[RMDB]
RNA sequence: GGGAACGACUCGAGUAGAGUCGAAAAUCACAAAGCGGAUUUAGCUCGGUUGGGAGAGGUCCAGACCGAAGAUCUGGUUGUCCUGUGCUCGACCCACAGAAUUCGCACCAUAAACAACGGGAGAUUCCCGGGAUAUAAAUUUCGAUUUAUAUCCCGGAAAAGAAACAACAACAACAAC
Reactivity to DMS in 0.01 (KOAc 150mM, MgCl2 10mM, bicine 150mM(pH8.5), 24C), signal-to-noise 3, nucleotides 027 to 126: u070c050a180c090a060a070a080g030c030g080g020a000u010u020u010a220g050c110u100c300g000g000u000u000g010g000g000a050g000a000g050g000u010c010c010a060g000a000c050c090g040a190a140g000a210u000c010u000g020g000u040u050g000u050c000c030u000g010u020g000c000u000c010g020a000c000c050c070a040c040a200g000a040a000u000u050c000g030c000a150c040c070a090u080a130a160a110c170a070a080c080g000g010g000a120g000a230u000u000c090
Reactivity to 2A3 in 0.01 (KOAc 150mM, MgCl2 10mM, bicine 150mM(pH8.5), 24C), signal-to-noise 8, nucleotides 027 to 126: u120c030a020c070a140a090a010g000c000g010g000a010u000u020u040a060g010c070u040c110g010g010u010u010g020g020g000a100g000a010g000g000u000c000c000a000g000a010c020c120g210a120a050g070a150u000c000u000g050g000u060u180g110u130c020c000u090g130u270g100c000u000c000g030a020c000c020c000a040c000a040g080a000a000u010u010c000g000c010a050c010c010a050u230a090a140a030c090a060a030c100g060g020g000a130g020a080u050u050c010